[RMDB]
RNA sequence: GGGAACGACUCGAGUAGAGUCGAAAAGAUAUGGAUUCUCGUGGGCAGACCAACAGCUCGGAAACGAGACAUGGUCGAUGCACGAGGAAUCCUAAGUCAAAUCGUGGUUUCUUCGGAAACCACGAAAGUUAGCUAACUACUUCGGUAGUUAGCUAACAAAAGAAACAACAACAACAAC
Reactivity to DMS in 0.01 (KOAc 150mM, MgCl2 10mM, bicine 150mM(pH8.5), 24C), signal-to-noise 5, nucleotides 027 to 126: g000a030u000a270u010g000g010a020u010u000c000u000c010g030u000g000g000g040c180a260g000a010c010c000a020a100c270a140g000c000u000c000g000g000a050a060a140c000g020a010g000a070c160a130u000g000g000u000c000g010a110u010g000c000a020c010g000a020g020g000a010a020u000c000c000u010a020a080g010u010c040a090a100a140u000c000g010u000g000g000u000u010u000c000u000u010c220g030g000a010a010a000c000c000a000c000g010a010a020a070
Reactivity to 2A3 in 0.01 (KOAc 150mM, MgCl2 10mM, bicine 150mM(pH8.5), 24C), signal-to-noise 3, nucleotides 027 to 126: g030a020u060a020u120g000g000a000u000u000c030u010c010g010u010g000g180g080c150a030g010a010c020c010a030a130c050a170g140c010u000c000g000g040a070a050a030c010g000a010g030a020c050a080u110g010g000u010c030g010a130u180g030c020a000c010g000a070g030g040a010a020u000c000c000u010a060a010g030u020c040a060a030a150u050c010g000u010g000g000u000u010u000c000u000u010c070g090g000a000a000a000c000c000a000c010g000a000a010a000